[RMDB]
RNA sequence: GGGAACGACUCGAGUAGAGUCGAAAAGAGGUUUUAUUGUUGUAUUUAUCAUACAUUGAUACUUGCCAUAGUUUAACCUAACUUGUUUUGGAGAUAGGAAUACCUCAGGGUCUCAUAUUUGUCAUUGACUUGUUUACUUGACAAGUGUUAAUACAUAAUCGACGUAGUCAUUCGUGACUACGUCGAUAAAAGAAACAACAACAACAAC
Reactivity to DMS in 0.01 (KOAc 150mM, MgCl2 10mM, bicine 150mM(pH8.5), 24C), signal-to-noise 1, nucleotides 027 to 156: g040a160g070g030u010u000u010u030a050u000u000g000u000u000g000u000a070u000u000u000a060u010c040a070u010a080c090a090u000u020g000a090u000a010c030u000u000g040c010c000a120u000a080g010u000u000u000a080a080c050c000u020a080a050c060u010u000g010u000u000u000u000g030g000a020g010a080u000a000g010g020a270a110u000a060c040c020u000c030a150g040g010g000u000c150u020c070a020u000a140u000u000u000g010u000c060a100u000u010g010a020c050u000u000g010u000u000u010a060c160u000u020g010a020c020a000a060g060u010g040u000u000a010a130u020a060c070a070u010a090
Reactivity to 2A3 in 0.01 (KOAc 150mM, MgCl2 10mM, bicine 150mM(pH8.5), 24C), signal-to-noise 2, nucleotides 027 to 156: g120a030g000g000u070u040u010u040a030u050u000g010u000u000g030u020a030u040u120u030a110u110c030a010u080a220c050a200u040u090g030a020u020a040c000u000u020g000c000c000a010u050a040g030u040u100u070a020a010c000c000u050a040a080c010u010u060g040u050u140u070u100g080g000a020g010a040u040a020g030g010a120a120u080a150c010c010u030c040a020g160g000g000u000c000u060c000a030u090a090u210u050u140g040u090c020a030u040u090g040a050c030u000u000g030u070u150u010a090c030u080u090g010a000c000a020a000g000u030g020u030u080a060a050u050a030c040a030u140a110
Source information: The record gives the reactivity of an RNA of 207 nucleotides to DMS and 2A3. Reactivities are rounded to 0.1 and cut off at 0 and 3. 2A3 adducts were read by reverse transcription with SuperScript II with manganese.